The record gives the reactivity of an RNA of 177 nucleotides to DMS and 2A3. For DMS, 1,729 sequencing reads were counted. DMS adducts were read by reverse transcription with MarathonRT. Reactivities are rounded to 0.1 and cut off at 0 and 3.
RNA sequence: GGGAACGACUCGAGUAGAGUCGAAAAUGUUGAUGACCCUGUGGUUGAUUGGCAUUAUUUUGAUGCACAGCCCUUGACCAGGAAGGUACAACAGCUUUUCUAUACAGAGGACAUGGCCUCAAGAUUUAUCUUAGAAGAACUUCGGUUCUUCUAAGAUAAAAGAAACAACAACAACAAC
Reactivity to DMS in 0.01 (KOAc 150mM, MgCl2 10mM, bicine 150mM(pH8.5), 24C), signal-to-noise 2, nucleotides 027 to 126: u010g000u000u000g010a080u000g000a110c020c010c100u000g000u000g020g030u000u000g010a090u010u010g010g000c030a020u000u000a080u000u000u000u000g020a030u000g020c020a120c090a060g030c070c040c110u010u000g000a110c250c110a070g010g010a050a040g010g010u000a040c030a070a060c130a140g010c040u010u010u000u000c030u000a060u010a120c130a150g010a040g000g010a080c070a100u000g000g000c010c000u010c010a050a070g010a130u000u000u000
Reactivity to 2A3 in 0.01 (KOAc 150mM, MgCl2 10mM, bicine 150mM(pH8.5), 24C), signal-to-noise 2, nucleotides 027 to 126: u020g020u030u040g030a180u050g050a040c020c000c040u060g080u090g080g040u010u000g050a150u000u120g040g000c020a000u040u030a070u040u240u110u160g010a010u040g000c040a020c020a200g030c040c000c000u040u090g010a010c000c000a000g040g030a000a030g010g000u040a060c030a070a010c010a050g000c000u060u040u030u000c040u000a120u030a110c040a020g020a020g020g020a020c050a160u110g080g040c010c000u000c010a020a010g010a050u050u000u000